[RMDB]
RNA sequence: GGGAACGACUCGAGUAGAGUCGAAAAAAAAAAGAUAUGGAGAGUUCAGAGCAGUCAGCGAGGGAAUCGGAAACGAUUCCUCCCCACCGCUGGGAGCUGCGACGAAGAACUCUCCUAAGUCAAAAAACAAUUAUGAUCGGUUCGCCGAUCAUAAUUGAAAAGAAACAACAACAACAAC
Reactivity to DMS in 0.01 (KOAc 150mM, MgCl2 10mM, bicine 150mM(pH8.5), 24C), signal-to-noise 1, nucleotides 027 to 126: a000a070a080a150a180a090g020a000u000a300u000g000g000a010g000a070g030u000u010c000a000g040a080g000c000a010g010u000c000a000g000c000g000a130g010g020g000a010a010u000c000g010g000a110a050a070c000g010a060u000u010c000c000u000c070c010c000c070a300c120c000g000c000u000g000g000g000a130g000c030u000g010c070g010a150c300g010a210a170g000a030a000c030u000c000u000c000c000u000a010a070g010u000c000a000a070a200a160a110a100